[RMDB]
RNA sequence: GGGAACGACUCGAGUAGAGUCGAAAAAGGGUAUCUAUUACUAUAAGGUAUAUCUUUUGAAAACUGCUGACAGGUUUUCAUAUCACUCAUACGUCCUGUUGCCAUACAAAGUUCUACGAGUCAGCUGAUACUGAGCCUGGUUCGCCAGGCUCAGUAUAAAAGAAACAACAACAACAAC
Reactivity to DMS in 0.01 (KOAc 150mM, MgCl2 10mM, bicine 150mM(pH8.5), 24C), signal-to-noise 1, nucleotides 027 to 126: a100g090g000g000u000a020u000c000u000a250u020u000a080c300u030a130u070a170a070g000g020u000a050u030a050u060c050u000u000u000u000g000a000a100a130a080c000u000g040c020u000g030a000c100a150g000g010u000u000u000u000c010a040u000a040u000c140a100c040u080c070a000u050a030c160g000u010c000c000u000g000u040u000g000c060c060a020u000a070c110a110a030a030g020u010u000c090u020a060c140g050a150g000u000c040a030g000c170u000g000